[RMDB]
RNA sequence: GGGAACGACUCGAGUAGAGUCGAAAAUGUUGGUGGAAGUUGGUUUUCAAACUGACAUCGAUGGGAAAAUAAGGACAGACCACAAGAAGUGGAAAGACAUAUUAAAGCUAUUAGAGCUACUAGGAAUCAAGUGCUCAUUCAUUGCCUGUGCAGAUUGGAUCCCUUUCUAUUUCGAUAGAAAGGGAUCAAAAGAAACAACAACAACAAC
Reactivity to DMS in 0.01 (KOAc 150mM, MgCl2 10mM, bicine 150mM(pH8.5), 24C), signal-to-noise 2, nucleotides 027 to 156: u000g010u000u000g020g050u010g010g000a070a270g000u000u000g010g010u020u010u000u000c070a130a060a100c010u010g000a220c020a070u000c050g020a090u000g050g000g000a090a030a080a170u000a080a150g000g010a140c060a100g020a180c030c030a070c030a100a080g020a090a180g000u000g000g000a070a030a110g010a070c070a090u000a140u010u000a090a070a130g000c020u000a080u000u000a130g000a050g010c000u000a110c080u000a110g010g000a030a170u000c040a070a200g030u000g020c010u000c000a130u000u000c040a060u000u010g030c040c040u000g000u000g020c010a080g000a110u000u020g000
Reactivity to 2A3 in 0.01 (KOAc 150mM, MgCl2 10mM, bicine 150mM(pH8.5), 24C), signal-to-noise 3, nucleotides 027 to 156: u130g000u000u020g000g080u020g040g010a050a110g030u020u100g080g060u010u170u000u150c030a080a040a030c020u090g040a050c000a040u050c040g020a100u100g000g010g070a010a070a000a150u150a100a050g020g000a020c000a010g070a000c040c000a000c060a140a030g120a130a040g010u040g000g000a070a050a020g050a010c040a020u200a050u050u290a130a140a000g040c010u020a110u150u170a120g050a000g020c020u070a030c010u060a030g080g170a100a080u110c030a100a000g020u020g030c000u000c010a010u030u040c010a010u010u150g010c040c050u040g030u030g020c020a020g050a170u060u050g080

An RNA of 207 nucleotides, treated with DMS and 2A3 and read out base by base. DMS adducts were read by reverse transcription with MarathonRT. Conditions: 150 mM KOAc, 10 mM MgCl2 and 150 mM bicine (pH 8.5), 24 C. DMS (dimethyl sulfate) methylates the pairing face of unpaired adenines and cytosines. For 2A3 the reverse transcriptase was SuperScript II with manganese. Reactivities are given for positions 27 through 156.